[RMDB]
An RNA of 177 nucleotides, treated with DMS and 2A3 and read out base by base. For 2A3 the reverse transcriptase was SuperScript II with manganese. It was measured as part of the RMDB library 15KREP.
RNA sequence: GGGAACGACUCGAGUAGAGUCGAAAAGUUUUCGAGUAGUCCCGGACCUAUCUAAAUUGGAGUCAUCCGACCGUAUGGAGAAAAUUUCCGACAAGAGGUGAUCCACUGAGGGUUUGCGGAAAAAUCACGUUAAUUCUUUGUUCGCAAAGAAUUAACGAAAAGAAACAACAACAACAAC
Reactivity to DMS in 0.01 (KOAc 150mM, MgCl2 10mM, bicine 150mM(pH8.5), 24C), signal-to-noise 2, nucleotides 027 to 126: g000u000u000u000u000c000g000a180g030u000a130g000u030c010c010c000g010g010a020c010c030u000a110u000c030u010a030a130a090u010u000g000g000a100g000u000c010a030u000c010c000g000a180c240c070g010u000a010u010g000g010a040g000a080a060a100a200u000u010u000c000c000g000a000c020a000a030g020a280g000g000u000g000a100u000c010c000a040c220u000g010a080g000g010g000u000u000u000g000c080g010g000a010a040a060a130a080u010c080a140
Reactivity to 2A3 in 0.01 (KOAc 150mM, MgCl2 10mM, bicine 150mM(pH8.5), 24C), signal-to-noise 2, nucleotides 027 to 126: g030u000u020u010u110c030g020a040g000u100a050g060u060c000c030c000g000g000a020c020c000u120a270u260c000u090a040a150a140u110u100g020g020a040g100u020c000a040u050c040c020g010a020c030c010g020u020a160u200g100g000a020g120a020a240a080a080u070u110u010c010c000g000a010c010a000a040g060a070g020g030u010g000a000u000c000c010a000c020u020g010a050g020g000g040u000u010u000g060c050g030g040a040a050a030a040a050u090c070a030